The record gives the reactivity of an RNA of 207 nucleotides to DMS.
High DMS reactivity at an A or C suggests that its Watson-Crick edge is free.
Values cover nucleotides 27 to 156.
Reactivities are rounded to 0.1 and cut off at 0 and 3.
The data come from the RNA Mapping Database (RMDB), library M2RFPK.
The reactions ran in a buffer of 150 mM KOAc, 10 mM MgCl2 and 150 mM bicine (pH 8.5), at 24 C.
For DMS the reverse transcriptase was MarathonRT.
The DMS profile rests on 1,829 reads.

RNA sequence: GGGAACGACUCGAGUAGAGUCGAAAAAUUCUGUACAUAAAUGUCGAAAGUAUUGCUAUAGUUAAGGUUGCGCUUGCCUAUUUAGGCAUACUUCUCAGGAUGGCGCGUUGCAGUCCAACAAGAUCCAAAAACAACGGCCACUUCGGUGGCCGUUGAACACAAGUGAUGAGUUCGCUCAUCACUUGUGAAAAGAAACAACAACAACAAC
Reactivity to DMS in 0.01 (KOAc 150mM, MgCl2 10mM, bicine 150mM(pH8.5), 24C), signal-to-noise 1, nucleotides 027 to 156: a150u000u010c030u000g030u000a130c070a130u000a080a100a100u000g010u010c040g000a090a030a130g000u000a030u010u000g000c060u010a150u020a170g020u000u000a090a070g020g000u000u010g000c140g020c080u000u000g000c030c010u000a160u000u000u010a070g040g000c000a040u000a020c030u000u000c030u000c070a250g000g010a090u000g010g050c020g040c050g020u000u010g030c030a160g050u020c050c030a040a030c080a070a180g000a070u010c010c050a010a080a100a110a130c010a000a010c000g040g000c000c000a030c000u000u010c280g100g020u000g020g000c000c000g000u000u010g010a000a180